[RMDB]
RNA sequence: GGGAACGACUCGAGUAGAGUCGAAAAGAUAUGGACCUAUCAAAGGGAGGAAGGUAUUCGGAAACGAAUAUGCUUCCGAAGAACUUUGAGUAGGUCCUAAGUCAAAACUGCUUCUUCGGAAGCAGAACUCUAUUCUUAGGUUCGCCUAAGAAUAGAGAAAAGAAACAACAACAACAAC
Reactivity to DMS in 0.01 (KOAc 150mM, MgCl2 10mM, bicine 150mM(pH8.5), 24C), signal-to-noise 4, nucleotides 027 to 126: g000a030u010a300u010g010g010a000c010c000u000a040u010c000a000a010a020g000g000g000a080g020g010a030a000g020g020u000a020u000u000c010g020g000a100a110a170c000g010a030a020u000a020u000g010c000u000u000c000c000g000a070a110g000a120a150c010u000u000u000g000a100g000u000a010g010g010u000c000c000u000a010a050g010u010c030a100a070a130a240c020u000g000c000u000u000c000u000u020c190g030g000a020a000g020c000a010g000a060a180
Reactivity to 2A3 in 0.01 (KOAc 150mM, MgCl2 10mM, bicine 150mM(pH8.5), 24C), signal-to-noise 3, nucleotides 027 to 126: g020a000u050a050u100g000g010a000c010c000u020a030u070c010a020a010a010g040g040g030a160g050g000a020a010g020g010u010a010u010u010c000g000g030a040a050a050c040g000a020a010u030a030u080g300c000u000u000c000c000g000a010a000g010a010a010c010u000u020u010g040a080g130u090a010g000g010u000c000c000u000a010a000g000u010c010a000a020a150a220c000u010g000c000u000u000c010u040u090c300g120g000a000a000g000c000a000g010a000a000